[RMDB]
RNA sequence: GGGAACGACUCGAGUAGAGUCGAAAACAAGUUCGUGCUUGCAACUUACACGUAGGGCGAGGGGUGGGCGAAAGUUGCCAUGAGACCGUAACUUUCGUAGUCAUUGAUAAAGGGGCAGGUCUCGCUCAAAACCUCCCGUGGUUCGCCACGGGAGGAACUCCUAUUAUUACUUCGGUAAUAAUAGGAGAAAAGAAACAACAACAACAAC
Reactivity to 2A3 in 0.01 (KOAc 150mM, MgCl2 10mM, bicine 150mM(pH8.5), 24C), signal-to-noise 4, nucleotides 027 to 156: c010a000a030g040u050u030c010g030u040g050c030u050u090g040c060a090a090c080u110u130a070c090a030c040g080u090a090g000g040g030c140g040a150g010g030g020g110u250g010g010g010c020g000a000a000a000g000u030u020g000c060c060a140u170g020a000g000a010c000c000g000u000a010a000c000u000u000u000c010g000u010a030g050u030c050a090u070u190g030a020u100a060a080a030g020g000g030g010c020a010g010g030u000c000u000c000g000c020u110c030a050a080a030a090c010c000u000c000c000c000g000u010g020g000u030u050c160g040c030c000a000c000g000g000g000a010g000g000a000a000
Record summary: This 207-nucleotide RNA was probed chemically with 2A3. Source: RMDB library M2RFOK, as collected in RNAgym. The 2A3 profile rests on 2,803 reads. Conditions: 150 mM KOAc, 10 mM MgCl2 and 150 mM bicine (pH 8.5), 24 C.